[RMDB]
RNA sequence: GGGAACGACUCGAGUAGAGUCGAAAAUGGGCCUUUUAAGGGACGGGCGGGAACCGGGCUCCAGGGCUUCGCCUAGGGAAGCACCCUUCUAGGGCCCAAAGGGCUUCGGGAGGGCAAUGGGACGGGACUGGUAUAGUAUGUUCGCAUACUAUACCAGAAAAGAAACAACAACAACAAC
Reactivity to 2A3 in 0.01 (KOAc 150mM, MgCl2 10mM, bicine 150mM(pH8.5), 24C), signal-to-noise 2, nucleotides 027 to 126: u030g010g040g050c020c050u130u190u140u260a100a060g060g010g070a070c050g010g050g180c270g020g040g020a030a030c070c040g000g040g120c090u010c040c030a050g100g030g010c010u290u170c160g080c040c070u100a030g110g010g000a050a010g040c030a070c040c000c010u020u000c050u090a030g000g020g000c000c000c010a000a000a050g000g000g000c000u090u070c120g000g040g000a170g030g010g000c110a120a180u120g000g000g010a030c010g020g000g000a020
Reactivity to DMS in 0.01 (KOAc 150mM, MgCl2 10mM, bicine 150mM(pH8.5), 24C), signal-to-noise 1, nucleotides 027 to 126: u010g020g010g020c020c030u000u000u000u010a110a120g010g030g010a090c090g010g000g000c100g000g000g000a160a050c160c080g010g000g000c170u020c030c060a040g010g000g020c060u000u000c180g010c110c050u010a120g000g000g000a070a080g010c140a140c020c020c020u000u000c040u010a070g000g010g000c000c000c020a000a050a150g000g000g010c160u000u000c090g000g010g020a070g000g000g010c100a060a070u000g020g000g000a110c130g010g000g010a300
Structure probing data (2A3 and DMS) for a 177-nucleotide construct. For 2A3 the reverse transcriptase was SuperScript II with manganese. For 2A3, 1,490 sequencing reads were counted. Conditions: 150 mM KOAc, 10 mM MgCl2 and 150 mM bicine (pH 8.5), 24 C. It was measured as part of the RMDB library OK2TRN.